[RMDB]
RNA sequence: GGGAACGACUCGAGUAGAGUCGAAAACUAUGACUACGGCGCACCCUAUAUUUAUGAGUCUGCGACGAUCGCGGUUUCCGACAAGAGCAAGGAAAAUAUCCAGACAUUGCAAGACCUCUACGGCAAGCCCAUAUAUAUGCUUCGGCAUAUAUAUGGGAAAAGAAACAACAACAACAAC
Reactivity to DMS in 0.01 (KOAc 150mM, MgCl2 10mM, bicine 150mM(pH8.5), 24C), signal-to-noise 6, nucleotides 027 to 126: c010u000a060u020g010a070c100u020a080c110g000g000c010g000c030a050c020c010c020u010a070u020a080u020u020u010a050u040g000a140g000u010c040u000g010c030g010a090c080g010a050u010c040g020c040g000g000u010u010u010c020c030g030a100c160a070a050g010a100g020c090a080a060g010g000a060a060a030a110u020a090u010c050c050a090g000a060c090a090u000u000g000c050a030a060g000a090c060c010u000c030u000a060c040g020g010c080a070a120g010
Reactivity to 2A3 in 0.01 (KOAc 150mM, MgCl2 10mM, bicine 150mM(pH8.5), 24C), signal-to-noise 9, nucleotides 027 to 126: c030u040a070u220g060a040c030u060a030c090g020g000c020g010c020a070c010c010c020u030a050u020a060u170u220u020a200u170g050a030g050u010c020u030g010c020g050a050c050g070a090u070c020g010c050g050g000u010u050u000c020c020g040a040c080a110a040g030a010g090c020a040a070g080g060a030a090a050a050u220a080u030c010c000a010g040a050c030a080u020u100g000c020a080a010g010a050c000c030u010c030u050a040c030g030g000c040a040a020g030